[RMDB]
RNA sequence: GGGAACGACUCGAGUAGAGUCGAAAAUUGGUUUCGACCAAAUCAAAGCGUACUACCUAGCCUUUUGACGCUCGAGAGGAACUACGAAUUUCCCAAAUAGGAAAUUCGCCUCGAGAGCGAUAAGGCUAGGUAUCGCACGAUCUUCGUUCGCGAAGAACCCAAGAUGUACUUUCGAGUACAUCUUGGGAAAAGAAACAACAACAACAAC
Reactivity to DMS in 0.01 (KOAc 150mM, MgCl2 10mM, bicine 150mM(pH8.5), 24C), signal-to-noise 1, nucleotides 027 to 156: u010u020g000g000u000u000u000c060g000a140c020c040a040a080a140u010c040a090a070a160g050c020g000u000a070c090u000a000c000c000u000a030g020c030c040u000u000u000u000g000a170c050g020c000u010c000g020a300g000a120g060g000a120a190c050u000a270c030g000a070a020u000u000u000c000c010c020a070a120a190u010a030g010g000a060a000a020u000u000c010g000c030c010u010c000g050a240g020a050g010c010g020a000u000a010a040g000g000c020u000a000g020g010u010a000u000c010g010c000a100c090g000a140u000c000u000u030c000g050u000u000c190g000c060g000a010a020g000a030a170
Reactivity to 2A3 in 0.01 (KOAc 150mM, MgCl2 10mM, bicine 150mM(pH8.5), 24C), signal-to-noise 4, nucleotides 027 to 156: u110u020g020g040u020u060u150c150g040a020c030c060a000a010a070u180c090a080a090a070g010c010g070u110a150c030u030a000c060c000u000a010g000c000c000u060u100u080u190g210a090c010g000c000u010c020g020a020g000a000g050g010a080a090c090u130a060c300g010a000a000u010u010u010c010c040c060a260a220a160u230a090g000g000a000a000a000u000u010c020g000c010c000u010c010g020a040g000a000g000c010g000a000u010a000a000g000g000c000u000a000g010g000u000a000u010c000g000c000a020c070g120a100u010c010u020u010c020g050u050u080c170g010c040g090a010a040g070a120a100
Structure probing data (DMS and 2A3) for a 207-nucleotide construct. Conditions: 150 mM KOAc, 10 mM MgCl2 and 150 mM bicine (pH 8.5), 24 C. 2A3 adducts were read by reverse transcription with SuperScript II with manganese.